[RMDB]
RNA sequence: GGGAACGACUCGAGUAGAGUCGAAAAGAUAUGGAUUCCCAGUGUACCAGCGUUGAAAGUAGAGAUGGUGACAUCGGAAACGAUGUCACCAUCUCUACUGGAGCUGUGACACGGGAAUCCUAAGUCAGGAUAUGAAUAACUUCGGUUAUUCAUAUCCAAAAGAAACAACAACAACAAC
Reactivity to DMS in 0.01 (KOAc 150mM, MgCl2 10mM, bicine 150mM(pH8.5), 24C), signal-to-noise 1, nucleotides 027 to 126: g000a060u000a300u000g010g000a020u000u010c000c000c000a180g100u000g000u000a030c100c010a000g030c010g030u010u020g000a190a130a030g000u000a000g010a010g000a020u000g000g010u000g010a030c020a010u000c000g030g000a080a110a300c000g030a000u000g010u000c000a000c020c000a000u000c010u000c000u000a000c010u000g000g020a090g010c020u000g000u010g000a020c030a000c010g020g000g000a000a000u000c020c000u000a000a090g000u010c060a170